[RMDB]
The record gives the reactivity of an RNA of 177 nucleotides to DMS and 2A3. Values cover nucleotides 27 to 126. The RNA was probed in 150 mM KOAc, 10 mM MgCl2 and 150 mM bicine (pH 8.5) at 24 C. DMS adducts were read by reverse transcription with MarathonRT.

RNA sequence: GGGAACGACUCGAGUAGAGUCGAAAACUAGUGGCUGUCAAAUACCACAGGGUUCUUUCAGCAGCCAUGGGAUGUAGAGAGAAUCUCUGAAGCAUCACCGGUCAAUAAAAAACUGACGGCCAAUGAGAUUGUGUAGUACAUUCGUGUACUACACAAUAAAAGAAACAACAACAACAAC
Reactivity to DMS in 0.01 (KOAc 150mM, MgCl2 10mM, bicine 150mM(pH8.5), 24C), signal-to-noise 9, nucleotides 027 to 126: c030u000a110g020u000g000g010c010u000g010u000c030a040a110a130u000a080c060c050a270c040a050g010g010g010u000u000c020u000u000u000c020a300g010c020a030g000c010c020a140u010g020g010g020a020u000g010u000a130g000a040g010a050g010a050a030u000c010u000c010u000g010a130a150g000c100a040u000c100a090c130c090g000g000u010c130a060a100u030a010a060a070a070a070a090c220u000g000a010c010g010g010c010c010a040a070u010g000a100g010
Reactivity to 2A3 in 0.01 (KOAc 150mM, MgCl2 10mM, bicine 150mM(pH8.5), 24C), signal-to-noise 8, nucleotides 027 to 126: c030u030a030g130u020g050g000c000u010g000u020c010a000a050a130u130a090c020c030a030c030a080g010g020g010u020u020c010u010u030u030c020a040g000c010a010g020c060c030a210u160g160g020g000a010u010g020u110a040g010a000g000a000g030a060a050u020c150u000c010u140g080a130a030g060c030a070u090c020a020c080c030g020g020u050c060a110a130u180a230a130a020a010a010a020c050u020g000a010c000g000g010c010c010a020a060u150g020a090g010